[RMDB]
RNA sequence: GGGAACGACUCGAGUAGAGUCGAAAAACAGGCGAUUUGCAGCAACUGCCGCUGGCUGCCCGGGUCCAGAUCGGCAGAAAGGCCAGCCUGCUCGAUCACCCAGCCAGCGAUGGCAUGGUCGAAGUCAGCCAUCGCUAAAUUUCGAUUUAGCGAUGGCAAAAGAAACAACAACAACAAC
Reactivity to DMS in 0.01 (KOAc 150mM, MgCl2 10mM, bicine 150mM(pH8.5), 24C), signal-to-noise 7, nucleotides 027 to 126: a110c070a060g010g010c020g000a100u000u010u010g010c080a090g000c070a130a120c060u000g000c030c010g020c010u000g010g000c020u000g010c070c080c080g000g000g000u010c110c080a070g000a060u010c020g000g010c000a010g000a020a060a110g010g000c030c100a120g000c090c000u000g000c040u010c020g010a020u000c010a120c070c030c010a130g010c010c010a000g000c130g000a070u000g010g010c020a080u000g010g000u000c020g000a060a120g010u010c120a120
Reactivity to 2A3 in 0.01 (KOAc 150mM, MgCl2 10mM, bicine 150mM(pH8.5), 24C), signal-to-noise 5, nucleotides 027 to 126: a000c020a010g050g000c020g080a140u030u060u280g050c080a060g020c020a070a110c040u040g030c000c010g000c000u000g010g000c000u030g010c010c050c020g060g020g000u050c050c010a010g010a070u080c000g010g000c000a000g020a060a030a000g080g010c000c000a010g000c010c000u010g020c050u070c030g020a020u010c000a030c040c010c000a000g000c010c000a020g000c010g040a040u040g020g000c030a040u060g020g000u030c020g060a060a020g080u060c020a030